[RMDB]
RNA sequence: GGGAACGACUCGAGUAGAGUCGAAAAUGUCCAGUCCCUCCCCGUUCCUGGAGAAGGGAGACUCGGGAACGCCUAGCAUCUGAGGGACAAAGCCGCCCCCGGGCGCUCCCCUCGGAGGUCCACUGGGAAAGGUUGGGGUUCGCCCCAACCAAAAGAAACAACAACAACAAC
Reactivity to 2A3 in 0.01 (KOAc 150mM, MgCl2 10mM, bicine 150mM(pH8.5), 24C), signal-to-noise 3, nucleotides 027 to 129: u100g040u000c000c000a000g020u010c030c010c000u000c000c000c000c000g010u000u000c000c000u030g170g020a070g030a170a100g080g010g040a070g000a010c010u010c020g000g000g000a020a000c030g000c000c040u030a020g030c010a070u030c040u090g030a030g030g020g000a020c070a020a050a010g030c090c010g010c000c010c000c000c030g010g000g000c020g000c030u040c000c000c000c000u000c000g000g000a020g000g000u020c040c010a020c030u070g030g000g050a020a070a050
Reactivity to DMS in 0.01 (KOAc 150mM, MgCl2 10mM, bicine 150mM(pH8.5), 24C), signal-to-noise 3, nucleotides 027 to 129: u080g020u000c100c000a010g040u000c030c000c020u000c020c040c080c010g030u010u010c020c000u050g030g040a030g030a020a090g010g060g000a070g030a110c000u000c100g060g000g000a090a060c150g040c050c030u040a070g060c100a120u080c050u050g000a030g010g020g050a080c070a100a100a030g040c110c060g040c010c020c010c040c110g010g010g060c030g070c050u000c060c020c000c000u020c050g030g010a000g030g070u000c070c130a120c000u050g040g000g010a000a100a070